This 177-nucleotide RNA was probed chemically with 2A3 and DMS.
[RMDB]
RNA sequence: GGGAACGACUCGAGUAGAGUCGAAAAGAUAUGGAAUGACCCAAGUAACAAGAGCUUGGACCUCGGAAACGAGCUAGCUCCGCCCUUGCAUUCCUAAGUCAAACGCUGAAUGUUCGCAUUCAGCGAAGAUGUAAAAAUGGUUCGCCAUUUUUACAUCAAAAGAAACAACAACAACAAC
Reactivity to 2A3 in 0.01 (KOAc 150mM, MgCl2 10mM, bicine 150mM(pH8.5), 24C), signal-to-noise 9, nucleotides 027 to 126: g010a010u040a020u080g010g010a020a010u040g080a120c100c070c050a020a010g060u100a180a170c300a300a220g010a000g020c030u120u140g090g180a300c060c030u000c000g000g020a030a030a020c000g000a000g010c020u020a000g000c010u020c040c100g170c040c020c000u010u010g000c000a000u000u020c000c000u020a070a000g030u010c040a120a060a070c030g000c000u000g000a010a000u020g030u050u110c300g010c130a000u000u000c000a000g000c000g000a010a020
Reactivity to DMS in 0.01 (KOAc 150mM, MgCl2 10mM, bicine 150mM(pH8.5), 24C), signal-to-noise 8, nucleotides 027 to 126: g010a040u000a180u010g000g010a020a000u000g000a180c140c170c050a050a060g010u010a090a130c100a130a080g000a010g000c000u010u010g030g000a110c240c020u000c010g000g000a070a060a110c010g010a010g000c100u000a040g000c020u000c010c040g000c260c070c000u000u000g000c010a020u000u000c000c000u000a050a110g000u000c040a100a110a240c030g010c000u010g000a010a010u000g000u000u010c240g010c010a000u000u000c000a010g010c000g010a020a020
Source: RMDB library TTRDEL, as collected in RNAgym.